[RMDB]
Chemical mapping of a 177-nucleotide RNA with DMS and 2A3. DMS (dimethyl sulfate) methylates the pairing face of unpaired adenines and cytosines. The reactions ran in a buffer of 150 mM KOAc, 10 mM MgCl2 and 150 mM bicine (pH 8.5), at 24 C. It was measured as part of the RMDB library RFMREP. For DMS the reverse transcriptase was MarathonRT.
RNA sequence: GGGAACGACUCGAGUAGAGUCGAAAAAGGCCGGCGCGAUACUCCCUAUAACAUCCUUUUCAGUAGAUUUCAUUAUCGUGCCGGUUUUCUCACAUGCAAAGCAAUCCCGCCAAUCUAAUUGAUGGCGCUGUACUCUAAUCUUCGGAUUAGAGUACAGAAAAGAAACAACAACAACAAC
Reactivity to DMS in 0.01 (KOAc 150mM, MgCl2 10mM, bicine 150mM(pH8.5), 24C), signal-to-noise 1, nucleotides 027 to 126: a120g010g000c020c000g010g000c000g020c000g000a010u000a030c190u010c100c060c040u030a140u010a110a120c200a060u010c030c050u000u010u010u030c100a070g020u010a080g010a050u010u010u010c130a060u000u000a010u000c000g030u000g010c000c000g010g020u000u000u000u000c010u010c010a180c240a090u030g000c120a020a080a060g000c150a060a070u000c000c110c000g010c000c000a020a110u010c000u010a130a110u000u020g020a070u000g000g000c020g010
Reactivity to 2A3 in 0.01 (KOAc 150mM, MgCl2 10mM, bicine 150mM(pH8.5), 24C), signal-to-noise 2, nucleotides 027 to 126: a000g010g020c000c030g020g010c000g000c010g010a000u000a000c040u050c030c010c030u070a080u040a140a070c060a090u090c030c010u090u100u090u140c070a050g050u080a010g100a090u030u070u080c060a060u020u130a000u000c000g020u000g000c000c000g000g000u000u000u010u000c010u020c010a040c010a030u130g030c050a050a030a140g040c000a000a090u060c040c050c000g000c010c020a120a120u050c000u170a090a300u140u180g010a020u010g000g010c000g040